[RMDB]
RNA sequence: GGGAACGACUCGAGUAGAGUCGAAAAGAUAUGGAUAACAGCAACAGCUAUGAUGUCGGAAACGACAUAUAGACAUGCUGUGUCCUAAGUCAAAAGCAGUGAAGAAAGUUCGCUUUCUUCACUGCAAGACUCUACCUCCGUUCGCGGAGGUAGAGUCAAAAGAAACAACAACAACAAC
Reactivity to DMS in 0.01 (KOAc 150mM, MgCl2 10mM, bicine 150mM(pH8.5), 24C), signal-to-noise 1, nucleotides 027 to 126: g010a000u000a270u000g000g000a020u000a040a050c000a000g030c000a030a060c300a240g010c000u010a000u000g040a000u010g040u000c000g000g000a050a050a150c010g020a000c000a010u000a000u000a000g000a110c130a110u000g000c010u020g010u000g000u000c000c000u000a020a130g000u000c040a070a040a120a120g000c030a000g010u000g010a030a000g030a020a020a020g020u010u010c270g030c010u000u010u000c000u040u000c000a010c000u000g010c000a010a020
Reactivity to 2A3 in 0.01 (KOAc 150mM, MgCl2 10mM, bicine 150mM(pH8.5), 24C), signal-to-noise 1, nucleotides 027 to 126: g030a000u030a000u060g020g030a020u130a300a090c000a010g030c000a010a110c000a300g130c030u010a020u130g300a040u040g120u000c000g010g000a000a070a000c030g000a010c030a010u010a000u030a000g060a120c050a060u030g000c000u010g000u020g010u000c000c000u040a080a030g040u040c010a010a000a070a110g000c000a010g010u000g020a010a000g010a010a040a000g020u090u220c260g060c300u020u000u000c000u000u020c000a000c000u010g000c020a000a000
An RNA of 177 nucleotides, treated with DMS and 2A3 and read out base by base. For DMS the reverse transcriptase was MarathonRT. Values cover nucleotides 27 to 126.